[RMDB]
RNA sequence: GGGAACGACUCGAGUAGAGUCGAAAAGAUCUGCGCCGAUCCGAAACGCUAGCAAACAGCCCGCAUCAUGUCGUCUCCUAACUUCGACGUGGUGAAAUACUGAGCCUAUGCGAGUAAGCCUGUUAGCAAUAGAUCAGAACGUUCGCGUUCUGAUCAACCACGGCUAAAGGUUCGCCUUUAGCCGUGGAAAAGAAACAACAACAACAAC
Reactivity to 2A3 in 0.01 (KOAc 150mM, MgCl2 10mM, bicine 150mM(pH8.5), 24C), signal-to-noise 2, nucleotides 027 to 156: g090a080u000c030u060g010c030g030c030c030g020a030u030c010c020g060a070a090a000c070g020c050u030a020g000c050a110a040a090c030a030g030c000c040c010g000c000a020u020c000a010u030g000u000c000g020u040c040u100c100c040u100a170a200c020u080u050c010g010a000c020g000u000g000g000u040g040a020a040a010u120a010c030u050g000a000g020c000c000u030a070u120g040c020g000a010g070u060a020a010g020c020c010u080g040u190u060a030g030c010a070a140u050a120g010a000u000c000a000g000a010a000c000g010u040u020c240g000c010g050u000u000c020u000g000a000u000c000a000a000
Source information:
The data come from the RNA Mapping Database (RMDB), library M2RFPK. The record gives the reactivity of an RNA of 207 nucleotides to 2A3. Reactivities are given for positions 27 through 156. High 2A3 reactivity points to a flexible backbone, as in loops and unpaired stretches.